[RMDB]
RNA sequence: GGGAACGACUCGAGUAGAGUCGAAAAGUCAGUCAACUAGCAGAAAGAAGAAAAGCUAGUGACUGACAGGCAGGCGGAAGCUCACAAACUGCCGUAUCCGAUAAGGAUACAAAAGAAAUGUGAGCAAAUACGACCUGCAUUUCGAUGCAGGUCGUAUAAAAGAAACAACAACAACAAC
Reactivity to 2A3 in 0.01 (KOAc 150mM, MgCl2 10mM, bicine 150mM(pH8.5), 24C), signal-to-noise 3, nucleotides 027 to 126: g000u000c000a000g010u000c020a070a030c080u000a000g000c040a000g230a240a300a060g180a220a020g110a060a170a030a000g010c000u000a000g000u000g000a000c000u000g000a000c010a000g000g020c000a000g000g000c040g080g010a140a000g010c000u020c000a000c000a000a120a020c010u000g000c000c030g000u000a000u000c000c020g040a020u090a300a060g000g010a000u000a000c010a000a040a000a010g100a010a110a000u030g000u000g000a000g000c000a000a030
Reactivity to DMS in 0.01 (KOAc 150mM, MgCl2 10mM, bicine 150mM(pH8.5), 24C), signal-to-noise 2, nucleotides 027 to 126: g000u000c000a010g020u000c000a090a120c000u010a010g000c040a080g010a140a010a090g040a270a240g020a090a110a100a090g000c000u000a010g000u000g000a020c000u000g000a000c000a030g000g010c070a100g000g120c140g000g040a090a160g010c010u010c000a020c020a000a060a150c020u010g000c150c000g020u000a000u000c000c000g010a070u040a110a160g050g000a020u000a060c020a060a070a030a140g000a090a200a170u000g020u000g000a000g080c000a080a060
Source information:
Structure probing data (2A3 and DMS) for a 177-nucleotide construct. The reactions ran in a buffer of 150 mM KOAc, 10 mM MgCl2 and 150 mM bicine (pH 8.5), at 24 C.